Conditions: 150 mM KOAc, 10 mM MgCl2 and 150 mM bicine (pH 8.5), 24 C. Chemical mapping of a 207-nucleotide RNA with 2A3 and DMS. As a SHAPE reagent, 2A3 marks flexible, mostly unpaired nucleotides at the ribose 2'-OH. Values cover nucleotides 27 to 156. For DMS, 9,073 sequencing reads were counted. For 2A3, 1,467 sequencing reads were counted.
[RMDB]
RNA sequence: GGGAACGACUCGAGUAGAGUCGAAAAGACCAUCUAAAACAUCUGUUAGUGAUAGUUUGGGUUUUAUUUUGGGAAAAUUCAGUGUUUUUGAAAAAACCAAAUGGUUUUGUGGGUCUGUCGCUGAACUGAGUGUUGGGAAUGUGGAUUCUGGUCUCUGCAUUAUGUAAUGCUUCGGCAUUACAUAAUGAAAAGAAACAACAACAACAAC
Reactivity to 2A3 in 0.01 (KOAc 150mM, MgCl2 10mM, bicine 150mM(pH8.5), 24C), signal-to-noise 3, nucleotides 027 to 156: g030a010c010c010a030u080c040u180a080a070a070a030c040a050u070c050u130g110u170u110a140g010u070g090a040u030a060g060u040u050u040g060g000g010u090u060u040u070a100u050u110u050u060g020g000g020a040a130a060a070u080u060c050a060g030u030g060u110u080u070u080u140g050a060a050a000a000a010a000c030c020a060a100a100u060g010g000u020u070u020u100g050u070g010g000g030u000c030u030g030u010c020g000c040u040g050a080a020c020u030g020a010g040u050g060u080u170g050g030g040a080a080u110g030u040g040g030a010u060u000c060u070g000g000u030c030u000c010u070g020
Reactivity to DMS in 0.01 (KOAc 150mM, MgCl2 10mM, bicine 150mM(pH8.5), 24C), signal-to-noise 3, nucleotides 027 to 156: g010a140c000c000a090u010c020u000a060a070a050a070c020a110u010c030u010g020u000u010a090g030u000g010a110u000a040g010u010u010u020g020g010g020u000u000u000u000a050u010u030u000u000g020g020g010a080a060a070a100u010u010c040a080g010u000g020u000u000u000u000u000g010a000a050a040a020a070a110c020c010a050a060a100u010g030g020u000u010u000u000g010u000g020g020g020u010c050u000g020u000c050g000c020u000g000a040a090c070u000g010a090g020u000g020u000u010g020g000g010a040a090u000g000u000g020g000a180u010u000c060u000g020g010u000c010u000c010u000g020